[RMDB]
RNA sequence: GGGAACGACUCGAGUAGAGUCGAAAAAAUUGCAACGUCGUGUUGAUGAAAGCAAUAAGGAGUUAGAGGCUUACCAACUUGACUCUCAAUCUGAUUCUACGACUGAGACAGAGGUAAAUCUCAGUGAAACACAAACGUUUAAAUUAAAUAUCUAAAAACCUAAUCGGUCAUUCGUGACCGAUUAGGUAAAAGAAACAACAACAACAAC
Reactivity to 2A3 in 0.01 (KOAc 150mM, MgCl2 10mM, bicine 150mM(pH8.5), 24C), signal-to-noise 2, nucleotides 027 to 156: a000a000u130u150g000c030a060a020c010g030u010c000g030u170g050u080u080g030a050u150g010a110a010a010g060c080a100a020u100a110a050g040g000a000g000u070u040a090g050a000g230g020c070u130u090a120c080c000a010a050c000u000u030g010a000c000u040c000u000c020a060a070u060c110u100g040a030u020u080c020u130a000c000g140a000c020u000g000a000g000a000c030a020g130a140g120g090u130a160a070a070u040c000u000c020a000g010u030g060a020a130a000c000a010c050a110a250a020c050g010u000u020u070a040a020a030u030u090a000a120a000u150a080u040c070u080a120a200a050a140

Notes
The record gives the reactivity of an RNA of 207 nucleotides to 2A3. The 2A3 profile rests on 524 reads. It was measured as part of the RMDB library OK3TST. Conditions: 150 mM KOAc, 10 mM MgCl2 and 150 mM bicine (pH 8.5), 24 C.